[RMDB]
RNA sequence: GGGAACGACUCGAGUAGAGUCGAAAAGAAAACGUCAGGCUCGCUGACCGAGCAAAAAGAAAAGCACUGCAUACCAGUGGUAUGAAAAAGAAAAGGGACACUUCCUGUCCGGAAGAAAAGAAAGAAAGGGUAUCAUAGUGUUCGCACUAUGAUACCCAAAAGAAACAACAACAACAAC
Reactivity to DMS in 0.01 (KOAc 150mM, MgCl2 10mM, bicine 150mM(pH8.5), 24C), signal-to-noise 1, nucleotides 027 to 126: g040a190a010a120a070c150g060u000c060a080g000g010c050u020c090g020c000u010g020a040c060c100g000a020g060c080a110a000a030a000a050g000a100a050a080a100g000c000a110c020u040g000c010a020u000a070c100c060a040g000u070g000g040u020a000u000g000a000a050a000a050a060g000a090a000a020a040g020g000g000a150c060a070c070u000u000c030c000u000g000u020c060c040g070g000a080a030g010a040a090a080a200g000a010a010a070g050a090a070a080